[RMDB]
RNA sequence: GGGAACGACUCGAGUAGAGUCGAAAAAGCAGUUCGUGGUGGCGUUCGCCAGCGCGGGCAGGCCGUUGAGAAAGCCGGGGCCGGACGUCGUCAGACACACGCCGGGCCGUGCGGUGAGGAACCCCGCUGUACCAGCUAAUUUCGAUUAGCUGGUACAAAAAGAAACAACAACAACAAC
Reactivity to 2A3 in 0.01 (KOAc 150mM, MgCl2 10mM, bicine 150mM(pH8.5), 24C), signal-to-noise 1, nucleotides 027 to 126: a000g090c010a010g030u020u020c020g010u020g050g170u020g050g000c060g110u290u300c140g020c000c000a020g040c020g020c000g020g030g000c050a020g130g000c010c020g060u040u130g050a110g000a180a020a000g010c000c010g090g060g000g040c030c020g080g000a090c010g020u060c000g000u040c080a030g130a140c020a010c010a000c180g000c000c030g050g010g020c020c020g070u140g020c000g000g020u040g010a120g020g040a040a050c000c010c020c020g000c040
Reactivity to DMS in 0.01 (KOAc 150mM, MgCl2 10mM, bicine 150mM(pH8.5), 24C), signal-to-noise 5, nucleotides 027 to 126: a100g020c020a100g010u000u000c020g010u000g020g000u000g000g000c010g020u010u020c210g010c000c000a020g010c010g010c010g000g000g020c010a080g010g030c010c090g010u000u000g000a120g020a090a090a290g010c010c010g020g010g010g010c000c010g010g000a050c060g010u000c120g010u010c180a110g010a120c180a070c080a060c110g020c010c010g000g000g010c020c000g010u010g020c000g000g000u000g000a090g000g010a090a100c060c000c010c020g020c170